Chemical mapping of a 177-nucleotide RNA with DMS and 2A3. DMS adducts were read by reverse transcription with MarathonRT. For 2A3 the reverse transcriptase was SuperScript II with manganese.
[RMDB]
RNA sequence: GGGAACGACUCGAGUAGAGUCGAAAACACACAAGGUUCGCCUUGUGUGCAAGAAUAGACGAAUACUACCGUAGAAGUAUUCAGGUCACAUAUCUACGGAAAUGGCGUUCUGCUUCGGCAGAACGAAGUGCAGAUUCGUGUUCGCACGAAUCUGCACAAAAGAAACAACAACAACAAC
Reactivity to DMS in 0.01 (KOAc 150mM, MgCl2 10mM, bicine 150mM(pH8.5), 24C), signal-to-noise 1, nucleotides 027 to 126: c010a010c010a020c000a010a000g030g000u000u030c290g040c000c000u000u000g000u020g000u000g000c120a050a090g010a100a100u020a040g010a060c090g000a010a020u000a000c010u000a300c010c000g000u000a000g000a010a040g040u010a000u000u000c060a070g000g030u000c070a100c160a090u000a100u000c000u000a000c000g000g000a160a090a030u010g000g020c000g020u000u000c000u000g020c000u000u010c140g020g010c000a020g020a000a000c000g010a010a100
Reactivity to 2A3 in 0.01 (KOAc 150mM, MgCl2 10mM, bicine 150mM(pH8.5), 24C), signal-to-noise 2, nucleotides 027 to 126: c010a000c000a000c000a000a000g030g020u020u060c110g110c040c000u000u010g000u000g010u000g000c010a020a040g080a080a060u180a110g150a070c060g010a050a010u000a010c000u030a090c000c010g010u000a010g000a050a000g000u010a010u010u020c050a020g110g090u140c050a020c020a160u260a070u070c010u000a000c010g020g110a040a050a040u170g120g030c000g020u010u010c000u010g000c000u000u070c260g100g000c000a000g000a000a000c000g000a030a020